[RMDB]
RNA sequence: GGGAACGACUCGAGUAGAGUCGAAAACGGCGGUCCUUGGACUAACAGCCCCAAGAACGGCCAGUAGUUUUCUUGGCUGAUUGGCUGUUGGCAUGGGGGCGUCGCGUAGCUGGGAGGUCCGGAACGGCGAUAAAUAAUCUUUCGAGAUUAUUUAUCGAAAAGAAACAACAACAACAAC
Reactivity to 2A3 in 0.01 (KOAc 150mM, MgCl2 10mM, bicine 150mM(pH8.5), 24C), signal-to-noise 4, nucleotides 027 to 126: c010g010g000c010g010g140u030c010c000u010u040g110g000a080c000u010a020a000c000a010g020c000c000c000c040a040a030g060a120a020c020g020g010c000c010a000g030u050a020g010u050u010u090u080c060u070u080g020g000c010u030g030a110u020u070g010g000c000u000g000u010u010g000g000c030a050u040g000g000g000g010g010c000g000u010c000g000c020g030u030a010g000c010u010g010g000g000a020g010g040u000c010c000g000g010a050a000c020g020g000
Reactivity to DMS in 0.01 (KOAc 150mM, MgCl2 10mM, bicine 150mM(pH8.5), 24C), signal-to-noise 5, nucleotides 027 to 126: c030g010g000c010g010g010u000c000c010u000u020g010g010a150c020u010a020a040c020a050g010c020c040c280c160a070a110g010a070a090c030g000g000c000c000a040g010u020a090g010u030u010u030u020c040u030u020g010g000c060u000g000a080u020u010g010g000c000u000g000u000u000g000g020c040a110u010g000g000g000g000g020c010g010u000c030g010c060g010u000a060g000c030u000g000g010g010a090g000g000u010c020c030g000g000a060a080c070g010g000

Chemical mapping of a 177-nucleotide RNA with 2A3 and DMS.
The data come from the RNA Mapping Database (RMDB), library OK1LIB.
The DMS profile rests on 19,586 reads.
For DMS the reverse transcriptase was MarathonRT.
2A3 adducts were read by reverse transcription with SuperScript II with manganese.
Reactivities are given for positions 27 through 126.
Conditions: 150 mM KOAc, 10 mM MgCl2 and 150 mM bicine (pH 8.5), 24 C.